[RMDB]
RNA sequence: GGGAACGACUCGAGUAGAGUCGAAAAGAUGACGGUACUAUAAUUAGUCAAUUGUAGACGACAGCAUUGACUAAUGCUAGUAUUUCCUAUGAUACUGAAGUGUAGGAACUUCGUCGUCACCGUCAUACAUAGGUGACUGAUUCGUUGGUCAUCUAUGAAAAGAAACAACAACAACAAC
Reactivity to DMS in 0.01 (KOAc 150mM, MgCl2 10mM, bicine 150mM(pH8.5), 24C), signal-to-noise 9, nucleotides 027 to 126: g010a040u000g000a010c000g000g010u000a190c090u000a020u010a050a030u000u000a060g010u020c080a040a030u010u010g020u000a070g000a080c080g000a050c070a050g010c010a010u000u000g010a090c090u010a030a010u000g000c060u000a010g000u000a000u000u000u010c100c100u010a110u030g000a020u000a030c050u020g010a020a010g010u000g010u020a170g010g010a120a030c020u000u000c000g010u000c070g010u000c130a070c000c000g000u000c010a020u010a130
Reactivity to 2A3 in 0.01 (KOAc 150mM, MgCl2 10mM, bicine 150mM(pH8.5), 24C), signal-to-noise 9, nucleotides 027 to 126: g090a010u010g000a000c000g000g000u020a010c010u000a010u040a090a080u070u020a020g050u040c030a020a020u070u080g020u030a030g020a060c060g020a020c090a020g020c010a030u000u030g050a050c040u120a020a000u010g010c010u010a000g000u000a030u010u020u050c010c010u040a050u150g020a010u020a050c060u090g020a030a010g020u020g020u140a120g080g080a040a010c010u010u010c010g000u010c000g000u000c010a000c010c000g000u000c010a010u020a050
Structure probing data (DMS and 2A3) for a 177-nucleotide construct. For 2A3, 136,508 sequencing reads were counted. Conditions: 150 mM KOAc, 10 mM MgCl2 and 150 mM bicine (pH 8.5), 24 C.